RNA sequence: GGGAACGACUCGAGUAGAGUCGAAAAACUAGGAGCGCACAUCUCUCUAAGACUGUACGACAGUCUGUCUCUCUAGCACGCUUGUUCAAGGAGAGAGAGAGAGCGUUGGAACAAGUGUGCAACGAAACUCGCACUUCAAAUUCGUUUGAAGUGCGAGAAAAGAAACAACAACAACAAC
Reactivity to DMS in 0.01 (KOAc 150mM, MgCl2 10mM, bicine 150mM(pH8.5), 24C), signal-to-noise 2, nucleotides 027 to 126: a100c050u000a080g010g020a130g000c030g020c050a100c150a170u000c010u000c000u000c000u000a170a020g010a010c000u000g010u040a140c280g000a210c080a000g000u000c000u000g000u010c020u000c020u020c060u000a140g020c030a030c020g020c020u000u000g010u000u010c030a110a130g000g040a060g000a020g010a040g000a050g020a030g050a040g020c080g050u000u000g010g020a020a030c010a020a020g050u010g030u000g010c020a150a070c230g000a110a050a070
Reactivity to 2A3 in 0.01 (KOAc 150mM, MgCl2 10mM, bicine 150mM(pH8.5), 24C), signal-to-noise 1, nucleotides 027 to 126: a030c080u110a050g030g140a030g060c030g010c040a000c020a100u060c000u000c000u060c000u020a040a000g000a010c010u030g030u170a100c150g110a120c290a010g000u000c000u040g080u000c020u000c000u030c080u090a020g000c000a000c000g100c020u050u070g060u070u040c110a120a110g000g000a010g000a000g010a000g010a010g000a010g000a000g040c050g110u160u200g080g000a040a000c010a010a010g000u000g000u010g040c000a030a000c030g080a060a080a000
Chemical mapping of a 177-nucleotide RNA with DMS and 2A3. The DMS profile rests on 929 reads. For 2A3 the reverse transcriptase was SuperScript II with manganese. The RNA was probed in 150 mM KOAc, 10 mM MgCl2 and 150 mM bicine (pH 8.5) at 24 C. It was measured as part of the RMDB library M2PK90.